Notes
Chemical mapping of a 177-nucleotide RNA with 2A3 and DMS. DMS adducts were read by reverse transcription with MarathonRT. The reactions ran in a buffer of 150 mM KOAc, 10 mM MgCl2 and 150 mM bicine (pH 8.5), at 24 C. Reactivities are given for positions 27 through 126.
[RMDB]
RNA sequence: GGGAACGACUCGAGUAGAGUCGAAAAGCCACCCCUGCCCUGUCUGGGGCUGAAGGACAGUGCCACCCCUGCCCUGUCUGGGGCUGAAGGACAGUGCCACCCCUGCCCUGUCUGGGGCUGAAGGACACACCAAGAUCAUAUUCGUAUGAUCUUGGUGAAAAGAAACAACAACAACAAC
Reactivity to 2A3 in 0.01 (KOAc 150mM, MgCl2 10mM, bicine 150mM(pH8.5), 24C), signal-to-noise 3, nucleotides 027 to 126: g030c010c020a040c050c000c000c020u030g000c000c010c000u020g010u080c070u090g040g000g040g020c010u010g070a050a040g030g010a020c030a040g040u030g060c000c010a060c020c000c000c030u000g000c020c010c000u060g050u140c140u180g050g000g020g020c010u020g040a060a030g040g000a020c030a040g000u020g030c000c010a050c010c010c000c020u010g000c020c010c000u050g040u140c080u130g020g010g000g000c010u010g030a060a030g050g020a010c010a000
Reactivity to DMS in 0.01 (KOAc 150mM, MgCl2 10mM, bicine 150mM(pH8.5), 24C), signal-to-noise 6, nucleotides 027 to 126: g000c040c040a220c030c010c000c040u000g010c020c030c000u000g000u000c080u010g010g010g000g010c010u010g000a170a110g020g010a050c040a030g000u000g000c050c040a250c020c030c050c030u000g000c000c050c000u000g010u000c100u000g000g000g000g010c010u010g000a200a140g010g000a060c020a050g010u000g010c040c090a250c020c020c030c040u010g000c010c020c000u010g010u010c100u000g010g000g010g010c020u010g000a100a090g000g010a140c150a220